[RMDB]
The record gives the reactivity of an RNA of 177 nucleotides to DMS and 2A3. The DMS profile rests on 38,949 reads. The 2A3 profile rests on 21,458 reads. Reactivities are given for positions 27 through 126.
RNA sequence: GGGAACGACUCGAGUAGAGUCGAAAAGAAGCUGAUGCCCUACCGCCUCUUUAUUUAUGGCCAUCGCGAUUAUCUCGCCCGCCAUCCGCCGAUCAGGACGCGCGAAGAUAUGACGGGGCAUCCGUUAUAAUUAGUAUGGUUUCGACCAUACUAAUUAAAAAGAAACAACAACAACAAC
Reactivity to DMS in 0.01 (KOAc 150mM, MgCl2 10mM, bicine 150mM(pH8.5), 24C), signal-to-noise 9, nucleotides 027 to 126: g010a120a100g010c020u000g000a030u000g010c010c010c010u000a140c220c150g000c020c020u000c160u000u000u010a090u020u010u010a070u010g010g020c010c080a120u010c170g020c110g000a100u000u010a030u000c070u000c010g010c010c090c060g010c030c020a090u000c040c070g010c120c080g010a080u010c160a100g010g010a050c090g020c300g000c020g000a040a040g000a030u000a020u000g010a210c090g000g000g000g010c020a020u000c000c070g000u000u000a090
Reactivity to 2A3 in 0.01 (KOAc 150mM, MgCl2 10mM, bicine 150mM(pH8.5), 24C), signal-to-noise 9, nucleotides 027 to 126: g090a050a010g000c020u010g000a000u010g010c010c010c010u030a060c030c050g020c030c020u130c080u120u290u160a250u110u280u060a110u210g010g000c020c010a120u140c050g030c070g030a010u030u010a020u030c020u000c010g010c020c070c000g020c030c010a060u030c020c040g100c050c060g080a100u130c080a060g030g040a070c010g010c000g000c010g040a060a030g010a030u020a020u050g030a030c040g010g000g000g000c000a000u000c000c000g000u010u100a120

Notes:
The data come from the RNA Mapping Database (RMDB), library OK2TST. The RNA was probed in 150 mM KOAc, 10 mM MgCl2 and 150 mM bicine (pH 8.5) at 24 C.